[RMDB]
RNA sequence: GGGAACGACUCGAGUAGAGUCGAAAAUUGACAUCGCCAAGACGUGGUUCUCUGGGGACUACGUGCAAGAACUCCAACGGAUGCUCAAGAAAGUCCGACCGGACACGGUGACAUUAGAGUGGGGCGAAGAGAUGCCCCUGUACGCUUACUUUGGCACUGAGCAUGUAUGUUUCGACAUACAUGCUCAAAAAGAAACAACAACAACAAC
Reactivity to DMS in 0.01 (KOAc 150mM, MgCl2 10mM, bicine 150mM(pH8.5), 24C), signal-to-noise 2, nucleotides 027 to 156: u050u040g000a110c030a030u000c000g040c000c020a050a150g000a090c010g030u000g040g000u010u000c010u000c140u000g020g040g040g020a070c000u000a040c040g020u020g000c070a130a050g040a070a050c040u000c020c020a050a080c030g010g040a030u000g000c030u000c030a080a120g010a040a170a150g020u000c020c010g030a170c050c040g020g000a100c180a100c050g030g030u000g010a160c040a080u000u010a080g000a190g000u000g030g010g030g050c020g000a180a070g000a140g010a180u000g030c000c000c030c020u010g030u000a030c030g010c060u000u000a080c060u010u030u000g010g000c130a210c110
Reactivity to 2A3 in 0.01 (KOAc 150mM, MgCl2 10mM, bicine 150mM(pH8.5), 24C), signal-to-noise 3, nucleotides 027 to 156: u110u060g050a030c060a090u090c030g000c030c000a050a030g060a020c020g000u020g010g020u080u000c110u030c140u150g230g020g020g000a010c020u000a000c020g010u020g040c000a030a120g060a150a070c030u060c030c040a090a040c030g060g000a010u050g020c020u020c060a060a130g080a150a050a000g100u060c020c020g040a070c070c080g060g000a030c030a020c110g010g010u080g020a040c030a100u020u220a040g030a060g070u160g030g000g000g000c040g040a110a030g050a010g010a160u210g000c000c000c000c010u010g010u060a000c050g000c080u030u030a040c000u010u080u120g010g020c040a050c170
Structure probing data (DMS and 2A3) for a 207-nucleotide construct. It was measured as part of the RMDB library OK3TST. The RNA was probed in 150 mM KOAc, 10 mM MgCl2 and 150 mM bicine (pH 8.5) at 24 C. 2A3 is a SHAPE reagent: it acylates the 2'-hydroxyl of flexible nucleotides of all four kinds. Values cover nucleotides 27 to 156.